[RMDB]
RNA sequence: GGGAACGACUCGAGUAGAGUCGAAAAUAUAACUUUUUAAAGCGUUUUGCUCAUCUCUCAUCACCACCAGCUCAAACGAACGUUCAAGCAUGAUGUUAUUCGUAAGCAACAGCGGUAUCUUACAUACCCUAGCUAUGCCAUUCGUGGCAUAGCUAGGAAAAGAAACAACAACAACAAC
Reactivity to 2A3 in 0.01 (KOAc 150mM, MgCl2 10mM, bicine 150mM(pH8.5), 24C), signal-to-noise 1, nucleotides 027 to 126: u140a030u000a030a150c030u210u130u120u060u140a090a110a000g010c000g050u000u080u100u190g000c020u020c020a110u000c030u010c020u010c010a070u010c010a020c060c000a000c000c020a030g000c050u010c060a060a090a030c030g080a030a010c040g020u000u010c050a060a000g010c030a020u070g000a010u080g110u110u010a100u080u100c030g040u050a020a030g010c030a010a040c010a040g070c020g090g030u030a030u000c030u090u050a040c040a060u090a040c030
Reactivity to DMS in 0.01 (KOAc 150mM, MgCl2 10mM, bicine 150mM(pH8.5), 24C), signal-to-noise 2, nucleotides 027 to 126: u000a090u000a130a120c090u000u000u000u000u000a060a100a140g010c020g010u000u010u010u000g000c010u010c090a030u000c050u000c000u000c010a060u010c010a100c040c010a040c070c050a050g010c030u020c050a110a170a090c080g010a100a020c040g000u000u000c050a060a080g000c060a080u000g000a040u000g050u000u000a100u000u000c090g010u000a080a040g000c080a050a070c140a030g010c000g000g000u000a010u000c050u000u010a100c130a080u010a060c130
This 177-nucleotide RNA was probed chemically with 2A3 and DMS. For 2A3 the reverse transcriptase was SuperScript II with manganese. DMS adducts were read by reverse transcription with MarathonRT.